[RMDB]
Structure probing data (2A3 and DMS) for a 177-nucleotide construct. The DMS profile rests on 1,165 reads. It was measured as part of the RMDB library OK1LIB.
RNA sequence: GGGAACGACUCGAGUAGAGUCGAAAAGUGGUGGUGGCGCUGCUGUUGAUUGAAACCCAAAGACGACGGCCAGGUCGGGGGUCAACUGAGUCGGCCAUCAAUAAAUCGCCCGCUGAUUGCCGUCCUCCCGAGGCUACGUAUUCGUACGUAGCCUCGGAAAAGAAACAACAACAACAAC
Reactivity to 2A3 in 0.01 (KOAc 150mM, MgCl2 10mM, bicine 150mM(pH8.5), 24C), signal-to-noise 2, nucleotides 027 to 126: g040u010g000g010u030g000g000u000g080g000c060g000c160u130g010c000u000g010u030u020g070a190u000u080g110a180a170a110c060c000c010a070a020a040g110a040c040g030a040c000g040g000c080c020a020g000g050u050c040g050g000g030g020g000u010c000a030a070c040u100g010a000g170u150c050g050g000c010c000a030u040c000a000a030u080a140a060a020u130c110g070c000c010c000g000c010u050g010a120u000u120g040c050c000g020u030c000c010u030c000
Reactivity to DMS in 0.01 (KOAc 150mM, MgCl2 10mM, bicine 150mM(pH8.5), 24C), signal-to-noise 1, nucleotides 027 to 126: g040u050g000g110u000g000g020u000g000g000c030g000c040u000g000c100u000g000u000u000g000a170u040u140g010a040a080a170c000c000c010a140a050a180g010a240c150g000a020c020g000g030c030c010a110g000g000u010c020g000g060g000g020g000u000c040a010a250c150u000g080a000g000u000c010g000g000c010c000a130u000c020a000a100u020a040a080a110u000c050g000c010c000c000g000c010u020g000a190u000u000g000c040c000g010u000c000c090u030c040